[RMDB]
RNA sequence: GGGAACGACUCGAGUAGAGUCGAAAAGAAAAGGUCCUGAAAGCAGUGAAGGGUCAGGUAACAAUAGUCGUGGAACAGAGAAUCAAUCAAUGAGAGACAAGGAUGUGAAUGCUGGUUCAAAAGGAAAGUGUCCUGCUAUAUUCGUAUAGCAGGACACAAAAGAAACAACAACAACAAC
Reactivity to 2A3 in 0.01 (KOAc 150mM, MgCl2 10mM, bicine 150mM(pH8.5), 24C), signal-to-noise 2, nucleotides 027 to 126: g180a020a120a020a030g040g060u070c020c020u040g050a050a020a000g000c040a010g090u010g110a090a020g070g000g030u070c020a000g000g070u170a090a000c070a110a150u080a120g070u010c000g100u040g010g010a020a000c030a090g040a000g060a170a000u050c070a000a060u000c000a040a050u140g020a010g000a000g000a090c050a040a030g120g030a070u090g000u000g170a030a000u130g000c040u060g120g000u060u030c000a030a030a030a020g060g020a070a130a020
Reactivity to DMS in 0.01 (KOAc 150mM, MgCl2 10mM, bicine 150mM(pH8.5), 24C), signal-to-noise 2, nucleotides 027 to 126: g000a160a130a080a140g000g050u000c010c020u010g010a040a090a120g000c080a020g010u000g010a170a050g000g020g000u010c060a060g000g010u030a110a090c030a040a090u010a050g040u040c060g060u000g000g000a070a070c110a030g020a060g000a010a050u020c030a030a160u000c080a060a110u020g000a060g000a050g010a090c130a000a110g000g000a130u010g000u000g030a110a060u020g000c020u010g000g060u000u000c090a030a020a010a050g010g000a070a080a130
Chemical mapping of a 177-nucleotide RNA with 2A3 and DMS. Reactivities are given for positions 27 through 126. Conditions: 150 mM KOAc, 10 mM MgCl2 and 150 mM bicine (pH 8.5), 24 C.